[RMDB]
Conditions: 150 mM KOAc, 10 mM MgCl2 and 150 mM bicine (pH 8.5), 24 C. An RNA of 177 nucleotides, treated with DMS and 2A3 and read out base by base. For 2A3 the reverse transcriptase was SuperScript II with manganese. DMS adducts were read by reverse transcription with MarathonRT. The 2A3 profile rests on 10,668 reads.
RNA sequence: GGGAACGACUCGAGUAGAGUCGAAAAUGAUGUUCACGAUCGUACCGUGGUUGCGCUCUUUCAUAUCGGCCAACACGGCGUGCAUACCGUUGAGCAGGCCUAGCACAUUCACAUCAAACAUGCGCUACCACCGUAAUUAGUUCGCUAAUUACGGUGGAAAAGAAACAACAACAACAAC
Reactivity to DMS in 0.01 (KOAc 150mM, MgCl2 10mM, bicine 150mM(pH8.5), 24C), signal-to-noise 6, nucleotides 027 to 126: u010g000a090u010g010u010u000c020a050c040g000a060u010c120g010u010a120c030c010g020u000g010g010u010u000g020c170g020c010u010c090u000u000u000c190a110u000a060u010c160g000g000c010c000a040a050c030a030c030g010g010c090g030u000g010c150a080u010a070c060c040g020u000u000g010a080g010c070a060g010g000c020c020u000a030g020c050a040c030a080u000u010c110a050c100a060u010c140a060a070a080c170a050u000g020c060g000c030u000a120
Reactivity to 2A3 in 0.01 (KOAc 150mM, MgCl2 10mM, bicine 150mM(pH8.5), 24C), signal-to-noise 7, nucleotides 027 to 126: u110g030a020u060g020u070u050c030a010c040g010a070u060c060g050u100a060c030c000g010u040g040g190u070u030g020c090g020c090u050c010u110u190u050c120a090u140a080u260c070g020g000c010c000a020a000c010a000c020g000g020c030g010u040g010c010a030u080a130c030c040g070u090u080g010a010g020c020a040g010g050c000c010u010a020g000c020a010c010a060u080u080c060a070c020a120u090c040a060a030a090c050a050u080g020c030g010c020u040a060